[RMDB]
The record gives the reactivity of an RNA of 177 nucleotides to 2A3. Source: RMDB library OK1LIB, as collected in RNAgym. Values cover nucleotides 27 to 126. Conditions: 150 mM KOAc, 10 mM MgCl2 and 150 mM bicine (pH 8.5), 24 C.

RNA sequence: GGGAACGACUCGAGUAGAGUCGAAAAUUUGAAACUAAUGUUCUUCGUUCACCAGAGGCUUUGGAAUGGAUUAAGCAUUGGAAAUACAAUCCGGAGAACAUAUCUUGGGGCUAUCUGAGCUUGAAUGCGUUCUCCAAUCCUUCGGGAUUGGAGAACGAAAAGAAACAACAACAACAAC
Reactivity to 2A3 in 0.01 (KOAc 150mM, MgCl2 10mM, bicine 150mM(pH8.5), 24C), signal-to-noise 1, nucleotides 027 to 126: u130u080u070g100a140a000a000c140u280a240a190u070g000u000u000c000u150u080c010g030u120u090c050a030c040c000a000g000a050g060g000c000u220u000u000g080g040a240a020u130g180g000a180u200u080a040a000g020c000a030u000u160g060g000a120a090a000u300a190c040a110a000u080c010c000g000g000a130g000a050a000c000a000u050a000u050c000u080u100g040g000g000g040c000u030a030u090c040u010g010a010g000c080u000u010g060a080a000u130g080